[RMDB]
RNA sequence: GGGAACGACUCGAGUAGAGUCGAAAAGCGUGUUUCAUUAUGAAGCAAGUCAAGUUUAAUGAUCUUGUAAAAAACAUUAAAGUACAAAUAAAUGCAAGCAAUAUAGUUUCAUUUAGUUCAAAACGUUUAGUCUCUUUUGCAUAAGCAAAAUGUGUUACAUAACAUCCAUGUUCGCAUGGAUGUUAUGAAAAGAAACAACAACAACAAC
Reactivity to 2A3 in 0.01 (KOAc 150mM, MgCl2 10mM, bicine 150mM(pH8.5), 24C), signal-to-noise 8, nucleotides 027 to 156: g050c050g010u030g020u020u030u020c070a080u030u250a100u300g010a010a010g000c020a020a020g080u080c010a000a010g000u000u030u080a000a010u020g020a030u050c010u010u030g040u090a060a060a000a000a010a000c010a010u030u050a090a070a040g070u090a050c030a060a150a070u060a030a020a010u040g040c040a010a030g010c010a080a020u140a040u040a300g030u020u030u020c010a010u020u040u060a030g020u040u130c050a060a100a060a030c040g010u020u060u060a060g030u010c010u000c000u050u020u020u020g000c030a050u050a290a150g010c020a020a020a030a070u120g030u010g020u040u040a030
Reactivity to DMS in 0.01 (KOAc 150mM, MgCl2 10mM, bicine 150mM(pH8.5), 24C), signal-to-noise 3, nucleotides 027 to 156: g030c000g020u010g030u000u000u010c010a240u000u010a160u010g010a050a030g000c020a040a050g020u000c030a030a030g000u000u000u000a030a030u010g000a150u000c010u000u010g010u010a000a010a030a020a020a030c000a010u000u000a100a070a140g010u000a090c050a040a050a070u000a020a030a030u020g000c190a040a060g020c020a070a130u000a140u000a150g010u010u000u000c020a020u000u000u000a040g010u010u000c060a060a050a110a120c070g020u000u000u000a140g010u010c010u000c010u010u000u000u000g020c010a070u000a040a150g010c060a040a030a060a110u000g010u000g010u000u000a180